An RNA of 177 nucleotides, treated with DMS and read out base by base. The DMS profile rests on 1,257 reads.
RNA sequence: GGGAACGACUCGAGUAGAGUCGAAAAGGGGAGGCGGGAAGCCCAGUGAGGGGGCUUUGUACACAUCCAGGCAAGAGUGGCUGCAAGUAUUGUGGCUGCUAAGUGGUUAAAUGGUGCAACACAUUUAUAAUAUUCCGAGGUUCGCCUCGGAAUAUUAAAAAGAAACAACAACAACAAC
Reactivity to DMS in 0.01 (KOAc 150mM, MgCl2 10mM, bicine 150mM(pH8.5), 24C), signal-to-noise 1, nucleotides 027 to 126: g000g010g030g000a130g000g020c140g000g000g000a180a040g010c010c000c010a110g020u000g010a100g010g020g000g000g020c030u020u000u000g030u000a070c080a120c090a070u010c050c040a060g010g020c110a090a090g000a050g010u000g010g020c020u000g010c010a040a140g020u000a090u000u020g020u000g010g000c010u000g010c000u010a050a090g010u000g030g000u000u010a060a040a060u000g000g020u010g000c100a050a080c150a040c110a070u010u000u020a070